[RMDB]
Notes:
An RNA of 177 nucleotides, treated with 2A3 and DMS and read out base by base. The RNA was probed in 150 mM KOAc, 10 mM MgCl2 and 150 mM bicine (pH 8.5) at 24 C. It was measured as part of the RMDB library OK1LIB. For DMS the reverse transcriptase was MarathonRT.

RNA sequence: GGGAACGACUCGAGUAGAGUCGAAAACGGUACGCAUUCGAUCCGAUCUGGACACUCCGGCCGGCGCGCGUGAUUUCCAGCGUUUCUUGAUCGGCAAGCUCAAGGAUAUCCGGGAGGUGGUUGCGACCAUUCGUUGCGGGUUCGCCCGCAACGAAUGAAAAGAAACAACAACAACAAC
Reactivity to 2A3 in 0.01 (KOAc 150mM, MgCl2 10mM, bicine 150mM(pH8.5), 24C), signal-to-noise 2, nucleotides 027 to 126: c020g000g020u200a040c030g000c020a080u120u150c030g060a110u100c000c000g010a150u160c010u050g000g000a010c010a020c060u020c000c040g080g000c000c000g000g000c000g000c000g000c000g110u060g040a080u030u010u140c020c010a010g020c000g020u000u140u090c080u090u140g020a160u020c000g000g000c030a080a020g110c030u030c110a050a070g060g010a050u060a080u080c010c000g020g020g000a040g050g000u020g000g010u050u010g000c000g000a000c000
Reactivity to DMS in 0.01 (KOAc 150mM, MgCl2 10mM, bicine 150mM(pH8.5), 24C), signal-to-noise 1, nucleotides 027 to 126: c130g070g030u020a080c120g000c000a070u000u000c080g020a070u000c020c010g010a120u070c030u010g040g020a040c180a040c260u000c020c020g030g000c110c080g000g000c040g010c130g000c030g000u010g020a040u000u010u010c060c030a140g010c110g000u030u000u000c110u030u010g050a020u020c000g000g010c000a090a270g000c040u000c040a120a080g000g000a040u010a100u000c030c010g040g000g000a250g000g000u000g000g030u000u000g000c020g020a130c050